The data come from the RNA Mapping Database (RMDB), library OK1LIB. Structure probing data (DMS and 2A3) for a 177-nucleotide construct. The DMS profile rests on 8,731 reads. Conditions: 150 mM KOAc, 10 mM MgCl2 and 150 mM bicine (pH 8.5), 24 C.
[RMDB]
RNA sequence: GGGAACGACUCGAGUAGAGUCGAAAAGAAUAAGCAAAAAUGUGAUCUUGCUUGUAAAUACGAUUUUGAGAGGUUAAUGAAUUACAAGUAGUGCUAUUUUUGUCUCUCUCUGCAAUAACGAACCGAAAGUAGUAUCCUCAUUCGUGAGGAUACUACUAAAAGAAACAACAACAACAAC
Reactivity to DMS in 0.01 (KOAc 150mM, MgCl2 10mM, bicine 150mM(pH8.5), 24C), signal-to-noise 4, nucleotides 027 to 126: g020a060a040u000a080a140g000c040a020a020a020a040a050u010g010u030g010a130u020c080u010u010g010c000u000u010g020u000a010a030a060u020a040c050g000a070u010u010u050u020g010a050g000a080g000g010u010u010a090a050u030g000a230a050u000u010a020c030a000a040g000u000a030g010u010g020c030u000a000u010u000u000u000u020g010u010c020u000c040u000c010u000c020u030g010c120a080a040u040a080a070c110g020a140a150c060c060g010a070a070
Reactivity to 2A3 in 0.01 (KOAc 150mM, MgCl2 10mM, bicine 150mM(pH8.5), 24C), signal-to-noise 6, nucleotides 027 to 126: g060a040a080u240a050a040g020c030a040a030a020a010a010u190g140u040g300a280u040c040u010u010g000c000u000u000g000u010a010a030a040u250a030c050g040a050u040u060u120u120g080a080g010a020g030g010u050u100a060a040u230g090a060a090u030u000a010c000a030a000g010u010a020g110u040g090c010u010a050u030u020u000u000u050g110u010c000u000c000u000c010u000c020u070g000c050a050a150u110a110a070c090g030a040a000c050c000g060a170a110